Description:
The record gives the reactivity of an RNA of 177 nucleotides to DMS. The DMS profile rests on 25,449 reads. The RNA was probed in 150 mM KOAc, 10 mM MgCl2 and 150 mM bicine (pH 8.5) at 24 C. For DMS the reverse transcriptase was MarathonRT. The data come from the RNA Mapping Database (RMDB), library TTRINS.
[RMDB]
RNA sequence: GGGAACGACUCGAGUAGAGUCGAAAAGAUAUGGACAAUCACGAUAUGCUAUGUUAGGGACAUGCUCCACUUCGGAAACGAAGUGUGAGCAACAGCCCUGCAUAGCAUAUCGUGAUUGUCCUAAGUCCUUGAUAAUACUGUUCGCAGUAUUAUCAAGAAAAGAAACAACAACAACAAC
Reactivity to DMS in 0.01 (KOAc 150mM, MgCl2 10mM, bicine 150mM(pH8.5), 24C), signal-to-noise 8, nucleotides 027 to 126: g000a110u010a300u010g000g000a010c000a010a000u000c000a010c000g010a010u000a000u000g000c000u000a000u010g000u000u010a020g020g000g000a050c110a250u000g010c000u010c000c000a020c000u000u010c000g000g000a150a120a280c000g010a010a010g010u000g010u010g010a010g010c000a000a010c280a180g000c010c000c000u000g000c000a000u000a000g000c000a000u000a000u000c000g010u000g000a000u000u000g000u000c000c000u000a010a090g000u000c040